This 207-nucleotide RNA was probed chemically with 2A3 and DMS. Source: RMDB library ARCHII, as collected in RNAgym. Values cover nucleotides 27 to 156. DMS adducts were read by reverse transcription with MarathonRT. The reactions ran in a buffer of 150 mM KOAc, 10 mM MgCl2 and 150 mM bicine (pH 8.5), at 24 C.
RNA sequence: GGGAACGACUCGAGUAGAGUCGAAAACACCUACAGCUUAUAUUGCUAGUCUAUCGUAACUGAUGGGCAACAUCCUCAAGGUGCUGGAAGUUACCUGCAAAGGUAAUAUCAGCAGCCACAUCUCCAUGUGGUUCACAGACUAAAUGAGGGUGGACCAGUUAUAAUGUGAGUUCGCUCACAUUAUAACAAAAGAAACAACAACAACAAC
Reactivity to 2A3 in 0.01 (KOAc 150mM, MgCl2 10mM, bicine 150mM(pH8.5), 24C), signal-to-noise 9, nucleotides 027 to 156: c090a070c010c020u090a070c050a040g000c050u220u080a080u120a090u300u300g020c030u050a050g010u000c010u020a040u040c020g070u050a030a100c060u120g040a020u030g020g000g000c000a010a020c000a000u000c000c000u000c010a040a040g070g000u050g010c000u000g010g030a110a110g020u000u000a000c000c000u010g040c080a090a060a050g000g000u000a000a000u030a030u060c010a000g000c010a000g000c010c000a000c000a010u120c170u050c210c040a020u020g000u000g000g000u010u030c060a110c030a110g090a040c020u060a040a060a110u060g000a000g010g010g000u010g010g010a040c030c010a010
Reactivity to DMS in 0.01 (KOAc 150mM, MgCl2 10mM, bicine 150mM(pH8.5), 24C), signal-to-noise 4, nucleotides 027 to 156: c070a180c020c030u010a120c140a100g020c100u000u000a150u000a080u000u010g010c010u010a130g020u000c020u000a090u010c050g030u000a080a220c240u020g010a090u000g010g000g010c000a070a050c010a030u000c010c000u000c020a070a170g010g000u000g030c010u000g000g010a120a300g030u000u000a010c010c000u000g020c260a100a180a030g010g010u000a010a010u000a120u000c030a040g030c040a090g010c010c010a010c000a030u000c120u000c200c090a060u010g020u000g010g020u000u000c050a200c110a100g000a110c110u000a040a100a170u000g010a020g000g020g040u000g010g010a100c030c030a180